[RMDB]
RNA sequence: GGGAACGACUCGAGUAGAGUCGAAAAGGCCGACGGAGGCGCGCCCGAGAUGAGUAGGCUGUCCCAUCAGGGGAGGAAUCGGGGACGGCUGAAAGGCGAGGGCGCCGAAGGGUGCAGAGUUCCUCCCGCUCUGCAUGCCUGGGGGUAUGGGGAAUACGUAAAGCUAUUACUUCGGUAAUAGCUUUACAAAAGAAACAACAACAACAAC
Reactivity to 2A3 in 0.01 (KOAc 150mM, MgCl2 10mM, bicine 150mM(pH8.5), 24C), signal-to-noise 1, nucleotides 027 to 156: g090g000c090c100g090a030c210g090g000a090g050g090c080g040c000g000c020c010c000g030a040g020a100u020g000a010g010u000a000g000g020c000u000g000u000c000c000c040a190u280c050a030g000g000g030g030a030g060g030a140a050u300c300g020g020g040g010a000c010g010g000c010u010g000a000a040a000g060g000c000g020a010g000g000g020c000g000c000c030g040a000a000g020g020g000u000g000c020a000g010a010g000u000u010c000c000u020c000c000c010g000c000u030c000u010g030c000a000u000g000c000c000u000g000g000g000g000g000u050a110u130g010g020g000g020a000a090u100a120c110